RNA sequence: GGGAACGACUCGAGUAGAGUCGAAAAUCUGAUGGUGAAUGGGAACUCCCUUCCUCCUGCAGCAGCCUGCCUGCAGCUGUCCUGGUAGAACAGUGUGGACAUUGCAGAAGCUGUCACUGCCCCAGAAAUGCUUGGGGAUUUUCGAAUCCCCAAGCAUAAAAGAAACAACAACAACAAC
Reactivity to 2A3 in 0.01 (KOAc 150mM, MgCl2 10mM, bicine 150mM(pH8.5), 24C), signal-to-noise 3, nucleotides 027 to 126: u060c050u050g060a100u040g040g050u060g030a130a100u140g010g010g030a080a070c040u110c020c010c000u040u060c000c020u020c000c000u050g000c000a020g000c000a000g010c000c010u100g050c000c010u000g000c020a010g020c050u010g010u000c010c020u020g120g060u110a060g110a200a070c050a120g130u090g040u070g170g030a000c010a010u040u040g000c000a000g010a120a020g000c000u020g000u040c000a000c060u060g010c030c000c000c000a020g070a050a170
Reactivity to DMS in 0.01 (KOAc 150mM, MgCl2 10mM, bicine 150mM(pH8.5), 24C), signal-to-noise 1, nucleotides 027 to 126: u030c010u000g000a090u000g000g000u000g000a130a040u000g000g000g000a060a120c150u020c000c000c050u000u000c020c000u000c090c020u000g040c070a080g000c000a040g070c010c020u090g010c200c000u000g000c060a020g050c180u030g000u000c000c030u000g030g020u000a100g000a130a200c090a020g000u000g050u060g020g000a040c040a020u040u000g020c050a040g000a240a070g000c000u000g000u000c080a120c130u000g000c000c000c000c000a150g000a110a080
Chemical mapping of a 177-nucleotide RNA with 2A3 and DMS. Source: RMDB library RFM100, as collected in RNAgym. DMS adducts were read by reverse transcription with MarathonRT.